[RMDB]
RNA sequence: GGGAACGACUCGAGUAGAGUCGAAAAUAGUCUAGAUACAUGAUCUCUAGUAGGAUCUAGUACCGGAUCCAUGAGUCAUGAUCGAUCCGCUCACUCUGAUCCUCGUACUCUAGUGACUAGCUCUAGCGCGAUCACUUCAUUUCGAUGAAGUGAUCGCAAAAGAAACAACAACAACAAC
Reactivity to 2A3 in 0.01 (KOAc 150mM, MgCl2 10mM, bicine 150mM(pH8.5), 24C), signal-to-noise 1, nucleotides 027 to 126: u070a010g010u000c020u020a020g010a030u070a130c080a050u090g150a170u110c040u040c030u140a030g090u090a030g030g010a010u000c020u010a010g020u000a040c030c010g060g050a020u000c050c020a110u150g040a020g240u150c120a040u080g040a070u090c020g010a000u000c010c010g000c040u030c070a010c060u130c100u040g010a000u000c000c000u060c070g050u060a090c040u030c010u040a000g040u000g070a010c010u030a010g000c000u000c020u030a070g000c040
Reactivity to DMS in 0.01 (KOAc 150mM, MgCl2 10mM, bicine 150mM(pH8.5), 24C), signal-to-noise 1, nucleotides 027 to 126: u000a050g000u010c000u000a040g030a050u000a100c060a090u000g000a080u000c030u000c030u000a100g020u000a140g020g000a000u000c000u000a080g010u020a030c300c030g130g000a000u030c000c000a010u000g000a130g000u010c070a030u000g010a110u000c130g000a030u000c010c040g000c000u010c160a010c030u010c150u000g030a020u000c000c050u000c190g010u010a020c090u010c000u000a060g000u000g000a070c040u010a110g000c150u000c010u000a030g020c220
The data come from the RNA Mapping Database (RMDB), library OK2TRN. An RNA of 177 nucleotides, treated with 2A3 and DMS and read out base by base. For DMS the reverse transcriptase was MarathonRT. Reactivities are given for positions 27 through 126. Conditions: 150 mM KOAc, 10 mM MgCl2 and 150 mM bicine (pH 8.5), 24 C.